Source: RMDB library 15KLIB, as collected in RNAgym. Chemical mapping of a 170-nucleotide RNA with 2A3 and DMS. The 2A3 profile rests on 1,734 reads. The RNA was probed in 150 mM KOAc, 10 mM MgCl2 and 150 mM bicine (pH 8.5) at 24 C.

RNA sequence: GGGAACGACUCGAGUAGAGUCGAAAAGUCGGAAGGUAUCGUCCCAAUGACCAAGAGAAGGGAAGAAACGGAAGCCUUUCCCCUUGACGCCGGUGAAACUCUGGAAUAGGAAGAAGGAAGGUGGAAAUAAUCAGCCCGUUCGCGGGCUGAAAAAGAAACAACAACAACAAC
Reactivity to 2A3 in 0.01 (KOAc 150mM, MgCl2 10mM, bicine 150mM(pH8.5), 24C), signal-to-noise 1, nucleotides 027 to 129: g130u010c000g020g000a050a110g040g020u010a040u140c060g000u000c040c000c000a000a020u160g000a000c020c020a050a000g000a000g000a090a000g000g000g060a030a030g010a040a030a040c020g010g020a000a000g020c000c000u000u040u050c000c000c000c000u020u010g000a000c030g000c020c000g000g000u010g010a070a040a160c050u130c020u010g000g000a000a000u020a020g000g000a070a000g000a000a000g160g000a000a000g070g040u140g000g130a000a000a000u170a010a110
Reactivity to DMS in 0.01 (KOAc 150mM, MgCl2 10mM, bicine 150mM(pH8.5), 24C), signal-to-noise 2, nucleotides 027 to 129: g020u000c000g000g000a090a020g020g030u030a070u020c170g040u030c040c010c000a000a040u000g020a110c040c070a110a090g010a090g010a050a000g000g010g050a050a000g020a000a000a000c210g020g000a050a040g020c000c010u040u000u060c000c000c000c000u000u000g000a130c300g050c030c090g040g130u020g020a070a050a070c060u030c130u020g000g050a000a000u030a130g020g010a130a030g020a030a030g010g000a010a070g010g050u000g020g010a000a080a100u050a170a150

Reactivities are given for positions 27 through 129. For DMS the reverse transcriptase was MarathonRT.